[RMDB]
RNA sequence: GGGAACGACUCGAGUAGAGUCGAAAAUCGUCCUCGAGUUUCUUGAUGGUUCUCCUGCUCUUCCGGAGCUUUCUUUCGAGGUCUUCCGCGUCUUUUCUUGCUUGGAUCCAUUUCUCGAGGACGUCCUUCCAUGACUAAUCUUCGGAUUAGUCAUGGAAAAAGAAACAACAACAACAAC
Reactivity to 2A3 in 0.01 (KOAc 150mM, MgCl2 10mM, bicine 150mM(pH8.5), 24C), signal-to-noise 1, nucleotides 027 to 126: u070c000g000u000c000c000u020c000g010a030g000u120u160u060c100u250u300g040a020u020g000g010u060u020c060u070c050c000u040g020c010u020c040u180u010c040c010g000g000a030g020c000u020u190u010c040u050u210u120c070g020a010g000g050u010c050u100u000c010c000g030c090g050u000c040u040u190u130u010c090u070u050g020c010u010u090g020g000a020u050c000c000a030u070u080u010c000u000c010g020a000g010g000a000c000g000u010c000c000u000